[RMDB]
This 207-nucleotide RNA was probed chemically with 2A3 and DMS. For DMS the reverse transcriptase was MarathonRT.

RNA sequence: GGGAACGACUCGAGUAGAGUCGAAAAUCAUACGGGAACGUAUGACGUAUGCGAAAGCAUACGUAGGCGGGGGAAGUGGACAAACGCCCGUAUACACGCUUAAAAGUGUAUACGAUUAGCACAUGUGCGACUUAAAGCGCAUGAUGCAGGUCCACGAUAUGUAUGUGUAUUUCGAUACACAUACAUAAAAAGAAACAACAACAACAAC
Reactivity to 2A3 in 0.01 (KOAc 150mM, MgCl2 10mM, bicine 150mM(pH8.5), 24C), signal-to-noise 3, nucleotides 027 to 156: u030c000a000u000a000c010g010g010g080a100a040c010g010u000a000u010g020a000c000g000u000a000u000g000c000g030a070a000a020g000c000a010u000a000c010g000u010a010g010g030c020g000g010g000g010g030a050a050g020u000g000g000a000c000a000a100a000c020g010c000c000c000g000u000a000u000a000c000a000c000g040c050u120u170a010a060a010a060g000u000g000u000a000u000a000c000g000a000u020u120a020g010c010a000c000a000u000g000u010g000c000g020a030c070u090u190a070a040a020g000c000g000c000a010u000g010a000u000g000c000a000g000g040u000c000c000a000c000g000a000
Reactivity to DMS in 0.01 (KOAc 150mM, MgCl2 10mM, bicine 150mM(pH8.5), 24C), signal-to-noise 5, nucleotides 027 to 156: u000c020a000u000a010c010g000g020g020a090a150c020g030u000a010u000g010a030c010g030u000a000u010g020c000g000a210a130a300g010c000a000u010a000c000g010u000a040g010g000c040g010g010g010g020g010a110a160g030u000g000g010a030c000a050a110a100c040g020c050c020c000g010u000a010u000a010c000a010c000g010c180u010u010a100a120a120a120g010u000g010u000a000u000a010c000g010a080u000u000a110g000c010a070c000a030u010g020u000g010c010g010a140c200u010u010a100a100a270g020c000g000c000a010u010g000a060u000g010c010a130g010g000u000c000c000a000c010g010a150
Overview:
The 2A3 profile rests on 6,057 reads. The reactions ran in a buffer of 150 mM KOAc, 10 mM MgCl2 and 150 mM bicine (pH 8.5), at 24 C.